[RMDB]
This 207-nucleotide RNA was probed chemically with 2A3. As a SHAPE reagent, 2A3 marks flexible, mostly unpaired nucleotides at the ribose 2'-OH.
RNA sequence: GGGAACGACUCGAGUAGAGUCGAAAAUGAGGAGUUAAACCAAGACAGGGACCACAGUUGCGAUGAGGAUGGUCACAUGGGUAUCCCUCAUGUUAGCUGGUAUUUCUAAGCAAUUUUCUUUAGGCUAUGUACUUCACAGACUUUAUUUCAUUUACUAUCGUAAAUGGACGUUCGCGUCCAUUUACGAAAAAGAAACAACAACAACAAC
Reactivity to 2A3 in 0.01 (KOAc 150mM, MgCl2 10mM, bicine 150mM(pH8.5), 24C), signal-to-noise 1, nucleotides 027 to 156: u100g000a050g050g030a070g000u060u030a070a100a060c000c020a060a000g050a000c010a040g000g140g000a000c000c030a010c110a070g100u160u140g090c110g040a120u080g050a010g040g000a070u030g000g080u000c010a000c010a040u060g000g040g000u060a060u060c000c000c000u010c000a000u030g030u040u090a040g010c030u010g040g020u020a100u030u080u030c090u000a120a000g000c000a040a070u000u010u070u250c020u040u090u110a010g030g000c030u030a000u090g000u040a050c010u080u030c040a010c010a040g080a030c000u030u140u070a150u080u110u070c030a040u020u050u110a050c020u080a090

For 2A3 the reverse transcriptase was SuperScript II with manganese.
The 2A3 profile rests on 488 reads.
The reactions ran in a buffer of 150 mM KOAc, 10 mM MgCl2 and 150 mM bicine (pH 8.5), at 24 C.